[RMDB]
RNA sequence: GGGAACGACUCGAGUAGAGUCGAAAAGAUAUGGACGAGGAACUACGGAUGUAGUUUCGUUGAAAUCGGAAACGAUGGAGAAAUGAGGUCCGCCUCGUCCUAAGUCAAAGGCGGGUUCGCCCGCCAACACCUGUACUUCCUUCGGGAAGUACAGGUGAAAAGAAACAACAACAACAAC
Reactivity to DMS in 0.01 (KOAc 150mM, MgCl2 10mM, bicine 150mM(pH8.5), 24C), signal-to-noise 2, nucleotides 027 to 126: g030a010u010a300u010g000g000a000c000g010a050g010g000a150a070c120u010a300c030g010g010a010u040g000u020a300g000u010u000u010c000g000u000u020g000a140a090a000u000c020g000g000a120a060a120c010g020a030u010g000g030a110g000a010a060a020u000g000a140g000g000u000c000c000g000c000c000u010c020g040u000c000c020u000a010a030g010u000c050a060a070a180g010g000c020g010g000g020u010u010c150g040c010c010c000g010c000c040a030a040
Reactivity to 2A3 in 0.01 (KOAc 150mM, MgCl2 10mM, bicine 150mM(pH8.5), 24C), signal-to-noise 1, nucleotides 027 to 126: g030a020u100a010u120g010g000a020c000g010a020g030g010a130a090c250u150a060c300g000g000a020u240g010u030a010g010u030u000u000c000g010u100u000g000a000a020a030u030c000g000g080a040a040a040c010g020a010u030g060g000a030g010a050a030a040u050g010a040g000g190u000c000c000g020c000c010u000c000g000u000c000c000u010a000a000g010u020c010a070a110a040g000g000c000g010g020g050u030u080c250g110c030c000c000g000c000c000a000a000
This 177-nucleotide RNA was probed chemically with DMS and 2A3. Reactivities are given for positions 27 through 126. The DMS profile rests on 1,207 reads. The RNA was probed in 150 mM KOAc, 10 mM MgCl2 and 150 mM bicine (pH 8.5) at 24 C. 2A3 adducts were read by reverse transcription with SuperScript II with manganese. The 2A3 profile rests on 2,609 reads.